Structure probing data (2A3 and DMS) for a 177-nucleotide construct. DMS adducts were read by reverse transcription with MarathonRT. Reactivities are rounded to 0.1 and cut off at 0 and 3. The RNA was probed in 150 mM KOAc, 10 mM MgCl2 and 150 mM bicine (pH 8.5) at 24 C.
RNA sequence: GGGAACGACUCGAGUAGAGUCGAAAAGGCAAGUGGUAUGAUUUUGGUGACUUCGUAAUCACUCAACCUGGUUCAGGAGUAGCUAUAGUUGAUAGCUACUAUUCUUAUUUGAUGCCUGUGCUCUCAACAUAGAAAUCUAGUUCGCUAGAUUUCUAUGAAAAGAAACAACAACAACAAC
Reactivity to 2A3 in 0.01 (KOAc 150mM, MgCl2 10mM, bicine 150mM(pH8.5), 24C), signal-to-noise 9, nucleotides 027 to 126: g010g000c010a020a040g080u020g050g010u040a020u050g020a030u030u030u050u070g020g010u020g010a010c010u050u030c120g070u090a050a050u030c010a000c020u170c030a010a030c010c010u090g120g170u160u140c020a010g000g010a010g010u000a000g000c000u000a010u040a080g220u120u200g210a020u000a010g000c000u000a000c000u000a010u020u010c000u020u050a090u080u040u100g060a040u050g010c000c010u020g020u060g020c000u000c000u000c010a010a080
Reactivity to DMS in 0.01 (KOAc 150mM, MgCl2 10mM, bicine 150mM(pH8.5), 24C), signal-to-noise 9, nucleotides 027 to 126: g000g020c030a030a080g020u000g010g010u000a020u000g000a030u000u000u000u000g010g010u000g000a030c080u000u000c300g010u010a140a170u000c010a010c010u010c050a020a030c010c010u000g010g010u000u010c040a020g010g010a030g010u000a000g010c000u000a010u000a170g020u020u010g010a180u000a000g000c000u000a000c000u000a010u000u000c020u000u000a030u000u000u000g010a240u000g010c000c010u000g000u000g010c110u000c010u000c030a070a220